[RMDB]
The record gives the reactivity of an RNA of 207 nucleotides to 2A3.
For 2A3, 2,179 sequencing reads were counted.
2A3 adducts were read by reverse transcription with SuperScript II with manganese.
RNA sequence: GGGAACGACUCGAGUAGAGUCGAAAAUAGCGGCUUAAUUCCCGCUUUCGCUUACCUAGAUUUGUCUGUGGGUUUACCGUAAGCGACAUUAACACAGAAUCGCUGGUUAACGCGUCCGCUGUUAAUCGGUUAAAUUAAGCGGAAUCGCUUGUAAAAUCAAUUGCAUGUAGUUCGCUACAUGCAAUUGAAAAGAAACAACAACAACAAC
Reactivity to 2A3 in 0.01 (KOAc 150mM, MgCl2 10mM, bicine 150mM(pH8.5), 24C), signal-to-noise 2, nucleotides 027 to 156: u060a010g000c010g060g000c070u130u170a060a040u290u210c000c000c020g010c040u000u060u030c020g000c000u010u010a000c000c000u050a030g010a040u030u020u010g010u000c010u000g010u010g010g000g030u020u010u020a050c060c020g010u000a000a000g010c020g080a010c010a120u230u230a120a010c020a000c000a020g020a020a010u000c010g010c010u010g000g000u000u000a010a000c010g010c030g080u010c000c020g000c010u000g000u000u010a010a010u020c000g000g020u000u010a010a010a060u170u160a190a030g000c000g020g070a020a030u090c100g030c140u040u060g060u100a050a070a000a050u020